Notes:
Structure probing data (2A3) for a 177-nucleotide construct. High 2A3 reactivity points to a flexible backbone, as in loops and unpaired stretches. Source: RMDB library OK1LIB, as collected in RNAgym.

[RMDB]
RNA sequence: GGGAACGACUCGAGUAGAGUCGAAAAUCAGCUCAAUAUGGUGUUUGACACCCCCUCGAUGGCUCUGGGACCGGAUUCUGACCUUGAGUAGGGCACAGGGAGUGUGAAGCCCGCUCUCUGACACCUAAGACCGACGACGAUUCGUCGUCGUCGGUCUAAAAGAAACAACAACAACAAC
Reactivity to 2A3 in 0.01 (KOAc 150mM, MgCl2 10mM, bicine 150mM(pH8.5), 24C), signal-to-noise 1, nucleotides 027 to 126: u180c030a020g040c000u010c010a030a000u080a170u300g100g000u060g000u030u200u180g060a030c000a060c000c000c000c000c050u100c080g050a060u110g010g000c000u050c030u010g000g000g070a080c000c060g110g000a130u180u000c010u110g080a130c050c000u050u050g100a030g010u230a060g000g120g000c100a020c020a000g010g020g020a000g040u030g000u110g150a080a080g060c010c010c000g000c010u000c000u040c000u000g020a030c000a030c190c010u030a040